Conditions: 150 mM KOAc, 10 mM MgCl2 and 150 mM bicine (pH 8.5), 24 C. Chemical mapping of a 207-nucleotide RNA with 2A3. It was measured as part of the RMDB library M2RFPK. Values cover nucleotides 27 to 156. For 2A3 the reverse transcriptase was SuperScript II with manganese.

RNA sequence: GGGAACGACUCGAGUAGAGUCGAAAAACCUUAUUUUGAGAAGCUGAGGGAUUUGGCCCAUAGGAGCUUCAGCAACCGACUUUAAAUAGCACGGUGCUAAUACCAACGAGCAACUCGAAUGAUAAGUAAAACGUUGACAAGUUCGCUUGUCAACGAACCAAUGAACGGUCUUCGGACCGUUCAUUGGAAAAGAAACAACAACAACAAC
Reactivity to 2A3 in 0.01 (KOAc 150mM, MgCl2 10mM, bicine 150mM(pH8.5), 24C), signal-to-noise 2, nucleotides 027 to 156: a000c030c000u040u070a150u010u010u080u050g080a030g000a040a060g000c050u110g020a130g050g060g000a130u050u130u140g040g020c070c000c010a070u120a020g080g000a020g020c000u060u030c020a010g000c000a000a010c000c000g040a010c000u160u050u150a100a230a250u160a090g010c010a020c020g000g000u010g000c000u020a020a010u030a090c020c000a060a070c100g100a020g020c000a000a020c030u020c030g030a030a040u070g070a030u090a070a030g020u090a050a090a070a000c020g000u000u000g000a000c000a020a000g000u030u070c230g170c090u000u010g000u000c020a000a000c010g000a000a010